[RMDB]
RNA sequence: GGGAACGACUCGAGUAGAGUCGAAAAGCGUAACGGCUGCGUGUAACCCAACUCUAGGUGUGCUGAUUAGCGGGCUUGACUCCGUAACAAAUAGGCACUGGUGGUAAAAAGCAUCCCACCUACUCACAAAGCUCCAAAUUCUUCGGAAUUUGGAGAACGGUUGCGUGAUGUUCGCAUCACGCAACCGAAAAGAAACAACAACAACAAC
Reactivity to 2A3 in 0.01 (KOAc 150mM, MgCl2 10mM, bicine 150mM(pH8.5), 24C), signal-to-noise 1, nucleotides 027 to 156: g040c010g010u000a050a000c080g050g000c010u070g000c000g060u070g040u000a020a020c000c000c000a040a040c100u170c040u040a100g020g010u150g000u040g160c000u000g020a130u110u100a000g040c000g000g000g050c040u080u160g030a100c030u000c070c020g000u010a000a000c000a060a030a130u210a170g000g030c000a020c040u040g000g040u060g000g030u050a000a110a150a300a090g100c040a020u030c000c000c000a000c000c000u040a040c070u070c040a110c090a180a140a000g070c030u000c000c000a000a000a000u000u000c000u000u060c110g060g000a000a000u030u010u000g020g000a010g000a060a000
An RNA of 207 nucleotides, treated with 2A3 and read out base by base. For 2A3, 414 sequencing reads were counted. For 2A3 the reverse transcriptase was SuperScript II with manganese.